Conditions: 150 mM KOAc, 10 mM MgCl2 and 150 mM bicine (pH 8.5), 24 C. Chemical mapping of a 177-nucleotide RNA with DMS and 2A3. DMS (dimethyl sulfate) methylates the pairing face of unpaired adenines and cytosines. For 2A3 the reverse transcriptase was SuperScript II with manganese.

RNA sequence: GGGAACGACUCGAGUAGAGUCGAAAAUCCCUCUCCCGUCCGAGUGAAGGGAGACUCCGGAACUCCAGUCAUUUGAGGGACGAAUCCGCCCCCGGGCGCUCCCCUCGGACUUCCUCCAGGAGGGUUCGUUUAAGUAGAUCUUCGGAUCUACUUAAACAAAAGAAACAACAACAACAAC
Reactivity to DMS in 0.01 (KOAc 150mM, MgCl2 10mM, bicine 150mM(pH8.5), 24C), signal-to-noise 3, nucleotides 027 to 126: u010c000c000c020u000c010u000c000c030c010g000u000c020c020g020a150g000u010g000a100a040g020g010g000a030g010a050c020u000c050c030g010g000a120a110c050u010c060c150a060g020u000c040a130u000u010u020g010a070g010g000g010a090c080g010a100a070u000c190c050g010c020c010c020c110c200g000g000g010c090g030c140u000c020c010c010c010u000c020g010g000a000c010u000u000c150c020u000c060c050a120g020g000a050g000g010g010u010u010c050
Reactivity to 2A3 in 0.01 (KOAc 150mM, MgCl2 10mM, bicine 150mM(pH8.5), 24C), signal-to-noise 1, nucleotides 027 to 126: u040c000c000c000u000c020u010c000c000c010g030u000c010c000g060a050g040u180g080a150a000g020g010g010a000g020a010c010u000c000c000g060g040a110a080c060u020c080c000a050g080u070c050a180u080u120u290g060a070g000g020g020a020c050g060a070a180u090c090c050g020c020c010c010c020c050g020g050g000c030g000c010u000c010c000c000c000u000c000g010g000a000c000u040u020c000c000u000c020c000a010g010g000a020g000g020g050u020u220c020